[RMDB]
RNA sequence: GGGAACGACUCGAGUAGAGUCGAAAACCGCAGCUGACCUGGCCAAAAGUAUAUUUACAAAGUAGCUAGGCAGUUCAACGCUCGCUAAGAUGUGGGUUGACCAUUAAUGGUCGGCUUAAGGUACGGGCUACGCCACCCGAGAGGGUGCAACUACCUAGUGUCUUAGUCUGUUCGCAGACUAAGACACAAAAGAAACAACAACAACAAC
Reactivity to 2A3 in 0.01 (KOAc 150mM, MgCl2 10mM, bicine 150mM(pH8.5), 24C), signal-to-noise 2, nucleotides 027 to 156: c020c000g000c100a050g010c010u030g090a300c000c000u010g060g000c010c000a000a020a000a030g000u020a090u040a070u270u300u050a010c010a000a050a000g020u020a000g030c000u000a020g000g000c000a000g000u080u050c020a050a040c080g030c000u000c000g030c050u130a060a020g030a260u150g080u170g100g030g050u040u020g000a000c000c000a030u170u300a230a270u220g030g000u000c000g000g010c000u020u080a040a030g010g030u030a020c000g000g000g000c010u080a060c140g030c010c000a020c010c000c000g000a000g000a020g000g000g000u000g060c000a040a040c020u180a040c030c040u010a010
Chemical mapping of a 207-nucleotide RNA with 2A3.